Chemical mapping of a 177-nucleotide RNA with 2A3 and DMS. DMS adducts were read by reverse transcription with MarathonRT. The DMS profile rests on 1,822 reads. It was measured as part of the RMDB library M2PK50. Conditions: 150 mM KOAc, 10 mM MgCl2 and 150 mM bicine (pH 8.5), 24 C. Values are in units of 0.01, from 0 to 300, in steps of 10.
RNA sequence: GGGAACGACUCGAGUAGAGUCGAAAAGUGGAUAGUUUCGACUAUCCACACAACUGAUGAUGUUACAGUGGAGGAUGAAGAAGAUGGCCAUCGGAUCCUCAAAUAGCACAGAGUUCGCUCUGUGCAACAGUCGCUGUAAUUUCGAUUACAGCGACUGAAAAGAAACAACAACAACAAC
Reactivity to 2A3 in 0.01 (KOAc 150mM, MgCl2 10mM, bicine 150mM(pH8.5), 24C), signal-to-noise 2, nucleotides 027 to 126: g000u010g000g000a010u010a020g000u030u070u110c170g010a020c010u000a000u000c000c000a000c010a000c000a010a010c010u040g030a050u050g020a030u080g080u140u120a030c020a070g050u110g150g030a060g040g030a090u090g080a080a140g020a060a010g050a080u130g100g010c050c020a030u010c000g040g010a020u010c020c010u010c010a050a040a030u100a040g000c010a000c000a010g000a000g000u060u000c130g070c050u000c000u010g000u000g000c000a010a000
Reactivity to DMS in 0.01 (KOAc 150mM, MgCl2 10mM, bicine 150mM(pH8.5), 24C), signal-to-noise 2, nucleotides 027 to 126: g050u010g000g000a000u000a000g000u020u010u020c140g010a060c000u020a010u010c000c000a000c000a040c210a130a050c050u000g010a100u010g000a100u000g020u010u000a080c050a030g010u020g000g020a080g020g010a010u010g000a100a170g000a040a100g020a060u010g000g020c080c030a060u010c020g000g000a100u000c010c010u020c050a030a040a050u000a100g000c000a010c020a000g000a020g010u000u020c230g000c000u000c000u000g000u010g010c000a040a070